[RMDB]
RNA sequence: GGGAACGACUCGAGUAGAGUCGAAAAGUCCCGGAGUUCGCUCCGGGACAAAGAACCUCAAAUUGACGCAAACUUCCGCGUCAUCGCGAGGAAAGGAGGAAAAAAUCACGGAGUUCGCUCCGUGAAACCUUCAAGGUAACUUCGGUUACCUUGAAGGAAAAGAAACAACAACAACAAC
Reactivity to 2A3 in 0.01 (KOAc 150mM, MgCl2 10mM, bicine 150mM(pH8.5), 24C), signal-to-noise 1, nucleotides 027 to 126: g030u020c030c000c010g040g020a020g000u040u060c090g010c090u030c010c020g000g000g010a000c020a000a000a000g010a010a030c000c000u000c000a020a030a050u060u030g020a000c000g000c020a040a190a250c210u300u070c230c100g020c000g000u000c010a000u000c010g010c020g010a000g020g090a060a030a000g090g020a090g040g030a130a060a070a000a020a020u020c010a000c010g010g000a020g000u090u050c110g090c130u000c000c010g000u010g000a000a000a000
Reactivity to DMS in 0.01 (KOAc 150mM, MgCl2 10mM, bicine 150mM(pH8.5), 24C), signal-to-noise 2, nucleotides 027 to 126: g000u000c010c020c030g000g020a010g030u000u000c270g010c010u010c000c000g020g010g040a000c040a000a090a080g010a110a150c010c010u000c020a040a240a100u040u000g000a030c000g000c000a050a070a170c300u020u010c120c130g010c030g000u010c000a000u010c090g000c300g000a020g020g010a030a030a050g000g000a050g040g000a010a000a160a030a030a090u000c020a010c000g000g000a030g020u020u040c180g000c000u000c000c040g030u000g000a000a020a070